Overview:
An RNA of 177 nucleotides, treated with DMS and read out base by base. For DMS the reverse transcriptase was MarathonRT. The DMS profile rests on 1,200 reads.
RNA sequence: GGGAACGACUCGAGUAGAGUCGAAAAGUGCUACUGAUGGGUUGCUAUAAUUACUACAGGUAUGUUUUCAUUGGUGAAGUGUGGAAUAAAAGAUUGAUCCCCUCCAAAUCUGUACAUCAUUUUACUAGACACAUACUCGAUUCGUCGAGUAUGUGUCAAAAGAAACAACAACAACAAC
Reactivity to DMS in 0.01 (KOAc 150mM, MgCl2 10mM, bicine 150mM(pH8.5), 24C), signal-to-noise 2, nucleotides 027 to 126: g040u010g000c060u000a100c050u000g020a150u000g000g020g030u010u000g000c070u040a090u000a060a080u000u000a040c100u000a070c140a070g000g000u000a020u010g010u000u000u030u010c100a030u010u000g000g020u000g000a030a020g010u010g020u010g020g000a070a090u010a100a100a050a040g000a100u010u010g010a100u010c020c000c010c030u000c030c040a090a030a020u010c030u000g000u010a110c100a050u000c060a030u010u000u000u000a030c060u020a140